[RMDB]
RNA sequence: GGGAACGACUCGAGUAGAGUCGAAAAAUAAGGUUCCUGGGCUAAGUAAAUCUAGUUCUGUGGACUGUCUUUCUGCCACCAAGAUCAAAGCUCUGGUUCCUGCCAGAGUCAGUGGGCUGAGCAGGAACAACGGAUGCACCUUCGGGUGCAUCCGUUGAAAAGAAACAACAACAACAAC
Reactivity to DMS in 0.01 (KOAc 150mM, MgCl2 10mM, bicine 150mM(pH8.5), 24C), signal-to-noise 1, nucleotides 027 to 126: a000u050a100a050g000g030u000u000c030c000u000g020g000g000c000u000a020a010g000u020a140a050a200u000c070u060a060g000u000u000c000u000g030u060g030g000a010c000u000g010u010c060u000u000u020c030u060g000c050c000a060c020c020a120a110g070a140u000c180a080a180a210g000c020u000c010u000g000g010u000u000c100c150u010g050c000c010a030g000a010g050u000c030a130g040u010g000g040g000c260u000g000a110g020c010a000g000g000a010a110